[RMDB]
RNA sequence: GGGAACGACUCGAGUAGAGUCGAAAAAUCCUGGCAUUCGUGCCAGGAUGUUUACCGAGAAAGUCCCUCGGUAUAAAAGGGCAACCCUUGGAUACAAGGGAAUAAUCGCAGUGUUCGCACUGCGAAAACUGGUGUAUCUAUUCGUAGAUACACCAGUAAAAGAAACAACAACAACAAC
Reactivity to DMS in 0.01 (KOAc 150mM, MgCl2 10mM, bicine 150mM(pH8.5), 24C), signal-to-noise 7, nucleotides 027 to 126: a020u000c000c000u000g000g010c000a030u000u010c180g030u000g010c000c000a010g010g000a000u000g000u010u000u000a080c000c000g010a050g000a100a090a100g010u010c010c000c000u000c020g000g010u000a040u010a030a060a070a080g000g010g020c130a120a120c010c000c000u000u000g010g010a230u020a110c010a010a010g000g000g000a090a050u000a100a130u000c010g010c000a010g010u000g010u000u010c190g020c010a010c000u000g000c000g000a000a010a070
Reactivity to 2A3 in 0.01 (KOAc 150mM, MgCl2 10mM, bicine 150mM(pH8.5), 24C), signal-to-noise 6, nucleotides 027 to 126: a000u000c000c010u000g010g000c000a010u030u050c180g080u060g000c000c000a000g000g010a000u000g000u000u050u030a040c000c010g000a020g030a060a170a010g170u050c010c000c010u000c010g010g000u040a020u070a050a050a010a010g030g010g010c020a060a080c000c000c010u010u000g070g020a150u180a300c010a010a010g010g010g070a010a050u100a020a020u030c010g000c000a000g000u010g040u040u070c140g030c100a000c000u000g000c000g000a000a010a000